[RMDB]
RNA sequence: GGGAACGACUCGAGUAGAGUCGAAAAGGGACGCCUUUAGAAGAAGAGGCUAGGUGGUAUUCCGGUGUGGGAUACUUGGUAAUAUGUAACGCUAAUUGCAUAAUAUUGUAGGACGGAAUUUACAGUCAAAACGGUCCUGCGUUCGCGCAGGACCGAACUCUAUUCAAUACUUCGGUAUUGAAUAGAGAAAAGAAACAACAACAACAAC
Reactivity to 2A3 in 0.01 (KOAc 150mM, MgCl2 10mM, bicine 150mM(pH8.5), 24C), signal-to-noise 3, nucleotides 027 to 156: g040g000g010a030c050g020c020c010u090u040u080a170g040a170a030g020a020a020g020a040g000g040c010u010a030g000g060u060g020g010u060a070u030u030c020c030g020g040u180g000u130g080g020g020a030u020a030c020u020u120g020g010u080a060a030u040a070u130g040u020a020a020c060g020c150u090a110a090u100u080g010c020a020u030a080a070u090a180u060u130g050u050a030g000g040a020c020g010g060a030a010u070u190u200a120c050a020g070u080c110a030a020a090a050c010g000g000u000c000c000u010g000c030g020u030u060c150g020c010g000c050a000g000g000a000c000c000g000a000a000
Record summary: Source: RMDB library M2RFPK, as collected in RNAgym. Structure probing data (2A3) for a 207-nucleotide construct. The RNA was probed in 150 mM KOAc, 10 mM MgCl2 and 150 mM bicine (pH 8.5) at 24 C. The 2A3 profile rests on 1,478 reads. As a SHAPE reagent, 2A3 marks flexible, mostly unpaired nucleotides at the ribose 2'-OH.